[RMDB]
RNA sequence: GGGAACGACUCGAGUAGAGUCGAAAAAGGCCAAGAGACAACAGCGAUUACAAACCCCAGUCCCAGCCUUGCAGCUGACCUUGCAGGUGACGCCCUGCCUGGGUGUCUCGGUGCAGCUGCACAUCAGGGGCCUCUGCUGGACAGAAGCUCUGAGUCAGAGUACUCGAUAGUUCGCUAUCGAGUACUCAAAAGAAACAACAACAACAAC
Reactivity to 2A3 in 0.01 (KOAc 150mM, MgCl2 10mM, bicine 150mM(pH8.5), 24C), signal-to-noise 1, nucleotides 027 to 156: a000g010g030c030c000a070a010g060a010g030a110c020a030a060c020a060g020c010g030a050u140u300a060c130a150a060a030c000c010c000c030a000g000u010c000c010c000a000g030c040c080u020u040g000c000a000g000c000u030g010a010c020c000u050u150g000c130a090g100g080u040g030a020c010g020c000c000c000u100g060c000c120u090g030g000g000u010g000u000c010u010c000g010g050u140g010c000a000g010c000u000g040c030a020c010a060u140c030a070g000g010g020g040c010c030u030c020u080g000c020u020g050g060a140c070a090g140a150a030g060c000u000c000u020g020a000g030u090c060a010
An RNA of 207 nucleotides, treated with 2A3 and read out base by base. It was measured as part of the RMDB library OK3TST.